Source information
This 177-nucleotide RNA was probed chemically with DMS and 2A3. For DMS the reverse transcriptase was MarathonRT. The reactions ran in a buffer of 150 mM KOAc, 10 mM MgCl2 and 150 mM bicine (pH 8.5), at 24 C. For 2A3, 11,652 sequencing reads were counted. Source: RMDB library OK1LIB, as collected in RNAgym.
RNA sequence: GGGAACGACUCGAGUAGAGUCGAAAAGCCGUCCCCACAGGCACUUUCGGUUUAGUCUAUGCCGACCUCGACCAGGUAGAAGAUGCCGGUACGGAUCUCCCAGCUGCUAACCGUGCUGCACUGGCCAACUCUCAUCAUUGUUCGCAAUGAUGAGAGUAAAAGAAACAACAACAACAAC
Reactivity to DMS in 0.01 (KOAc 150mM, MgCl2 10mM, bicine 150mM(pH8.5), 24C), signal-to-noise 4, nucleotides 027 to 126: g020c020c030g030u000c010c000c020c070a090c150a110g020g000c050a040c040u000u010u000c050g010g020u020u010u020a110g000u020c040u000a070u010g030c040c020g000a080c080c020u000c070g000a110c080c020a080g010g030u030a100g030a100a090g010a130u030g020c020c010g000g000u030a060c090g020g000a070u030c030u000c010c000c010a070g000c040u000g000c050u020a050a120c040c040g030u010g000c040u010g000c040a040c030u000g000g010c040c100a100
Reactivity to 2A3 in 0.01 (KOAc 150mM, MgCl2 10mM, bicine 150mM(pH8.5), 24C), signal-to-noise 7, nucleotides 027 to 126: g040c020c010g040u070c020c010c010c010a050c010a040g060g000c020a020c030u050u100u060c060g070g030u030u050u180a060g030u040c050u050a100u160g030c010c010g030a050c000c010u050c030g030a040c020c020a050g060g020u080a040g060a140a020g060a050u090g010c000c000g000g000u030a050c030g010g030a060u010c020u010c050c000c000a020g020c030u040g000c010u030a040a060c030c000g050u050g010c020u020g000c010a020c050u010g020g010c010c010a020